[RMDB]
Record summary:
This 177-nucleotide RNA was probed chemically with DMS. Conditions: 150 mM KOAc, 10 mM MgCl2 and 150 mM bicine (pH 8.5), 24 C. The DMS profile rests on 1,224 reads.
RNA sequence: GGGAACGACUCGAGUAGAGUCGAAAAGCAACUUCCGCCUGCUGGGUUCAAGCAAUUAUCCUGCCUUAGCCUCCCGAGUAGCUGCGACUAUAGGCGUGCACCACCAUGACUGGCUAAUUUUUUGUACAACCACUGAUCCUUUCGAGGAUCAGUGGUUAAAAGAAACAACAACAACAAC
Reactivity to DMS in 0.01 (KOAc 150mM, MgCl2 10mM, bicine 150mM(pH8.5), 24C), signal-to-noise 1, nucleotides 027 to 126: g000c050a070a110c060u000u000c060c040g030c060c030u000g020c020u000g010g000g010u000u000c060a060a130g010c050a080a080u010u040a060u010c050c050u010g000c000c040u000u020a120g000c020c020u010c020c020c030g000a110g010u000a090g020c040u000g020c170g000a040c050u000a080u000a030g000g010c050g030u000g040c090a060c040c030a020c050c040a060u000g000a100c050u000g000g010c030u030a000a030u000u000u000u000u000u000g020u010a110c300